The record gives the reactivity of an RNA of 207 nucleotides to 2A3. For 2A3 the reverse transcriptase was SuperScript II with manganese.

RNA sequence: GGGAACGACUCGAGUAGAGUCGAAAAAUAGAGAUUGGAGUCAUACAACCCCAGAAACCAUUCCUUAUACCUUGAGUAUUGCUGAAUUCAGUUUAUCGUGCAUGCUCUUGGCUAUUCUCAUAGUGAUAAAAUCUGUAGUCCUUCGGGACUACAGAAACCUCAAAAACGUGUUCGCACGUUUUUGAGGAAAAGAAACAACAACAACAAC
Reactivity to 2A3 in 0.01 (KOAc 150mM, MgCl2 10mM, bicine 150mM(pH8.5), 24C), signal-to-noise 1, nucleotides 027 to 156: a000u100a000g080a000g000a020u030u080g020g020a020g130u110c120a050u140a180c060a090a060c020c020c010c010a010g120a080a040a010c020c010a050u000u120c000c010u010u120a070u020a210c000c030u000u000g010a000g040u000a030u130u070g030c010u000g090a170a130u110u250c020a070g130u120u200u230a220u030c090g070u140g010c040a030u000g000c000u000c000u000u000g000g000c000u030a070u160u060c070u000c030a130u140a090g110u060g070a080u070a020a060a040a060u040c000u000g000u010a000g000u000c000c000u020u040c140g030g000g000a000c000u000a000c000a000g000a000a000a000
The data come from the RNA Mapping Database (RMDB), library M2RFPK. The reactions ran in a buffer of 150 mM KOAc, 10 mM MgCl2 and 150 mM bicine (pH 8.5), at 24 C.